Structure probing data (2A3 and DMS) for a 177-nucleotide construct. 2A3 adducts were read by reverse transcription with SuperScript II with manganese. It was measured as part of the RMDB libraries RFM100 and RFMREP.

[RMDB]
RNA sequence: GGGAACGACUCGAGUAGAGUCGAAAAAGCACCGGAUCGAUGAGGGGGCUUCGCCGCCUACCGAUUCGAACCGAACUCCGAAUGCCCGAGGGUCUAGAGCGCGGCAGUCAGAACAUGUGGGCUAAGCUUAUAUUUCGCGUUUCGACGCGAAAUAUAAAAAAGAAACAACAACAACAAC
Reactivity to 2A3 in 0.01 (KOAc 150mM, MgCl2 10mM, bicine 150mM(pH8.5), 24C), signal-to-noise 3, nucleotides 027 to 126: a000g070c060a040c040c000g000g000a110u010c000g010a000u010g020a040g000g000g000g000g010c000u110u070c070g040c090c030g000c030c000u200a300c060c000g000a000u000u010c010g000a000a000c000c020g010a040a010c030u050c040c000g080a140a050u100g030c000c000c050g010a090g050g010g020u030c030u040a020g000a030g010c010g000c020g000g000c000a020g000u010c000a000g060a050a030c010a050u080g020u030g040g020g010c010u040a040a000g020c010
Reactivity to DMS in 0.01 (KOAc 150mM, MgCl2 10mM, bicine 150mM(pH8.5), 24C), signal-to-noise 4, nucleotides 027 to 126: a080g000c110a150c160c000g010g020a090u000c000g000a000u000g000a300g020g000g000g000g030c010u000u000c300g000c290c210g000c000c000u010a080c020c000g010a200u000u000c000g020a020a020c040c000g000a120a130c100u010c030c060g010a100a080u010g010c000c020c000g020a090g010g000g000u010c030u000a070g010a060g000c040g010c030g000g000c040a020g000u000c030a030g020a070a090c050a110u000g040u000g000g000g000c030u000a040a130g010c070
The RNA was probed in 150 mM KOAc, 10 mM MgCl2 and 150 mM bicine (pH 8.5) at 24 C.